This 207-nucleotide RNA was probed chemically with 2A3 and DMS.
[RMDB]
RNA sequence: GGGAACGACUCGAGUAGAGUCGAAAAAAACUCUAGGUGCAUGCCGACUUGGUAACAGAAGUCGUAAAUCCACUGUUGCAACUACUUAUAGUUGCCAAUGACGACCAAUACGGUGCUGCUCUCGCUGCUUAAUUGCAGCUGACAUGCACUCCUGGUAGAGCUAUAUAUUGUUCGCAAUAUAUAGCUCAAAAGAAACAACAACAACAAC
Reactivity to 2A3 in 0.01 (KOAc 150mM, MgCl2 10mM, bicine 150mM(pH8.5), 24C), signal-to-noise 5, nucleotides 027 to 156: a000a000a000c100u090c060u060a070g040g000u020g020c020a020u030g010c030c000g030a040c020u040u050g040g020u060a060a010c020a030g030a080a010g010u020c030g060u110a000a040a080u080c060c020a030c060u030g030u060u040g000c000a020a010c020u160a020c020u160u170a070u090a300g000u010u010g010c010c020a120a170u130g030a050c060g050a020c010c020a050a040u060a120c060g000g000u030g000c010u010g020c040u000c000u020c090g010c010u010g010c010u050u110a100a050u300u100g000c000a000g000c000u010g000a010c000a010u180g000c000a000c010u040c010c050u030g020g020u060a050
Reactivity to DMS in 0.01 (KOAc 150mM, MgCl2 10mM, bicine 150mM(pH8.5), 24C), signal-to-noise 2, nucleotides 027 to 156: a070a020a090c040u000c030u010a070g020g010u000g010c010a050u010g000c050c020g010a080c060u020u000g040g010u000a080a050c030a080g000a070a060g010u000c020g010u000a030a060a120u000c080c040a110c090u010g020u000u000g010c000a060a040c020u000a110c190u030u000a120u000a050g030u000u000g010c000c040a040a060u000g010a130c040g000a070c020c020a050a120u000a070c100g000g000u000g010c020u000g000c060u000c050u000c160g020c020u000g000c000u000u000a070a180u000u000g010c020a040g030c000u000g010a010c010a060u000g000c010a020c000u000c080c040u000g010g010u010a170

Description
The data come from the RNA Mapping Database (RMDB), library ARCHII. The RNA was probed in 150 mM KOAc, 10 mM MgCl2 and 150 mM bicine (pH 8.5) at 24 C.